[RMDB]
RNA sequence: GGGAACGACUCGAGUAGAGUCGAAAAUGUGUUUGAUAGGAACAGGUCAGUGAGCAGUGGAAAUUACCUUUUAAGGUAUUUGAACACGUUGGACAAGCCCACACUCAAACCUAAUGUGUACUGGAGAAAGUAUAACAUGACCAUGCAUUCAUACACAUAUUACGGUGGCAUUCGUGCCACCGUAAUAAAAAGAAACAACAACAACAAC
Reactivity to DMS in 0.01 (KOAc 150mM, MgCl2 10mM, bicine 150mM(pH8.5), 24C), signal-to-noise 1, nucleotides 027 to 156: u000g050u000g040u000u030u010g030a100u000a170g020g030a130a090c070a070g020g030u000c040a170g060u030g000a040g020c000a030g060u000g000g000a140a040a100u000u000a000c000c000u000u000u000u000a160a000g090g000u000a000u000u000u000g000a140a180c020a010c050g040u000u030g000g000a230c150a080a070g000c210c000c000a270c020a070c040u000c040a050a030a100c040c020u030a070a010u000g030u000g010u010a070c090u020g020g000a170g020a110a030a070g000u000a070u000a110a040c040a090u000g000a300c020c000a150u010g000c050a130u000u010c020a050u010a010c010a000c040a200
Reactivity to 2A3 in 0.01 (KOAc 150mM, MgCl2 10mM, bicine 150mM(pH8.5), 24C), signal-to-noise 2, nucleotides 027 to 156: u080g030u000g000u010u080u060g060a060u030a040g080g050a120a070c060a120g000g070u020c030a050g130u000g070a010g010c080a070g070u020g000g100a050a020a010u060u000a040c020c030u110u170u090u140a210a010g000g000u000a020u040u000u040g010a020a000c030a030c130g010u020u250g100g030a030c000a110a050g020c000c020c000a000c000a000c000u020c030a050a060a090c040c020u150a060a030u070g040u020g010u030a010c040u010g030g030a150g080a130a160a000g050u030a070u010a170a050c040a070u070g000a000c010c000a040u050g000c010a030u050u020c010a000u000a090c000a000c000a030